Notes:
An RNA of 207 nucleotides, treated with 2A3 and DMS and read out base by base. 2A3 adducts were read by reverse transcription with SuperScript II with manganese. Conditions: 150 mM KOAc, 10 mM MgCl2 and 150 mM bicine (pH 8.5), 24 C. It was measured as part of the RMDB library OK3TST.
[RMDB]
RNA sequence: GGGAACGACUCGAGUAGAGUCGAAAACACUAAGACAACCAUGCAACUUCGAAAGAAUCACAGCAGUGCCCAGUUUAUUGACUCAUAUAUUUGCCAAGUAUGCUCCCGUGGGGAUGAAGAUGAUAAGCUUCUUUUCUGUGAUGGCUGUGAUGACAAAAGGCAUUAAUCGAUUCGUCGAUUAAUGCCUAAAAGAAACAACAACAACAAC
Reactivity to 2A3 in 0.01 (KOAc 150mM, MgCl2 10mM, bicine 150mM(pH8.5), 24C), signal-to-noise 1, nucleotides 027 to 156: c110a000c030u120a020a030g040a080c040a000a050c000c000a020u070g070c040a140a080c020u050u100c090g100a110a060a030g000a080a030u040c010a010c000a000g000c000a000g040u020g100c000c000c000a010g010u060u160u150a150u070u100g050a040c030u040c120a010u020a040u060a090u220u190u130g030c020c010a040a010g040u000a070u100g030c030u050c000c000c000g060u040g000g000g070g000a010u030g010a030a000g030a020u110g010a060u030a110a100g010c000u060u000c000u100u220u020u030c010u040g000u020g040a030u040g070g000c000u020g000u000g030a030u020g000a030c010a020a200a000
Reactivity to DMS in 0.01 (KOAc 150mM, MgCl2 10mM, bicine 150mM(pH8.5), 24C), signal-to-noise 1, nucleotides 027 to 156: c060a240c160u010a040a040g000a100c040a000a080c020c020a260u000g040c030a070a070c010u000u030c030g020a120a180a140g000a170a040u000c010a060c070a110g000c000a080g000u000g000c010c010c020a070g040u020u000u000a030u000u000g020a040c010u000c020a090u000a040u000a080u030u040u000g050c060c060a100a110g040u000a040u000g010c040u020c000c000c000g030u000g000g010g050g000a070u000g010a040a070g040a040u050g000a140u000a090a040g020c020u000u000c040u020u010u020u030c020u040g050u000g040a050u040g010g040c020u010g120u000g000a070u010g040a110c170a040a080a150